[RMDB]
RNA sequence: GGGAACGACUCGAGUAGAGUCGAAAAACGGCUGGCUACGGCCAGCCGAAUCGGGACAAAGGCAGUCGCCCGACGACACAGGCGAUCGUUCGCCCAAGCGCUGCACACGACUAUACGUAGUCGUGAAUUGAUCACGCAACCUUCGGGUUGCGUGAAAGUCAUUAUAACAGUUCGCUGUUAUAAUGACAAAAGAAACAACAACAACAAC
Reactivity to DMS in 0.01 (KOAc 150mM, MgCl2 10mM, bicine 150mM(pH8.5), 24C), signal-to-noise 1, nucleotides 027 to 156: a230c050g000g040c000u000g050g000c030u010a060c170g020g010c000c000a040g010c000c010g000a030a010u010c020g050g020g020a120c050a050a030a160g030g010c040a060g000u000c060g000c000c030c020g000a090c030g000a210c050a090c030a080g040g000c020g010a040u000c130g000u000u000c030g000c000c010c060a060a120g010c080g000c000u010g030c000a300c010a030c000g010a020c000u010a050u000a120c290g000u000a020g010u010c000g080u000g000a050a070u020u000g020a150u000c000a000c010g000c000a020a000c000c000u000u000c300g040g040g020u000u000g000c000g000u000g000a010a000a080
Reactivity to 2A3 in 0.01 (KOAc 150mM, MgCl2 10mM, bicine 150mM(pH8.5), 24C), signal-to-noise 3, nucleotides 027 to 156: a000c010g000g020c010u030g000g000c000u020a040c240g170g000c030c000a000g000c000c010g010a000a010u010c010g000g000g030a080c080a110a200a090g100g000c010a010g040u070c040g020c020c000c000g010a010c010g020a000c020a000c040a130g270g050c050g010a030u020c030g090u100u030c070g150c020c030c010a030a040g040c020g020c090u040g000c010a010c000a000c030g010a000c010u010a010u050a090c300g150u020a000g000u000c000g000u000g030a000a000u060u150g050a010u030c000a000c000g000c000a000a010c000c000u030u060c120g070g000g000u000u000g010c000g000u000g000a000a000a000
This 207-nucleotide RNA was probed chemically with DMS and 2A3. The RNA was probed in 150 mM KOAc, 10 mM MgCl2 and 150 mM bicine (pH 8.5) at 24 C.